[RMDB]
RNA sequence: GGGAACGACUCGAGUAGAGUCGAAAAGAUGGGUCCGAUGGAUUAAUGCGUCGCCCGCCAUUGGAUCCUGAUUGAUAGAUUGACGGCGACGGUCGGAUCACUCGGUAAUUCGGUGCUCUACGAGUGAUCCGUGAUGAUAGUUAAGACGAGCACCUAAAUAGCGUAGCACGUUCGCGUGCUACGCUAUAAAAGAAACAACAACAACAAC
Reactivity to 2A3 in 0.01 (KOAc 150mM, MgCl2 10mM, bicine 150mM(pH8.5), 24C), signal-to-noise 1, nucleotides 027 to 156: g140a030u150g000g000g000u000c000c020g030a000u020g000g000a000u000u290a280a070u270g090c000g000u000c000g000c000c010c000g000c000c000a000u000u000g000g000a000u000c010c000u030g030a090u100u070g080a080u050a180g100a120u030u050g060a060c040g010g000c000g010a000c000g010g020u000c000g000g000a030u000c000a000c000u000c000g000g110u080a080a120u180u150c040g000g020u010g000c000u000c000u000a020c010g000a000g000u000g000a000u000c000c000g000u000g030a030u170g000a040u060a130g290u240u210a090a070g080a030c010g030a000g060c050a000c000c000u000a000a000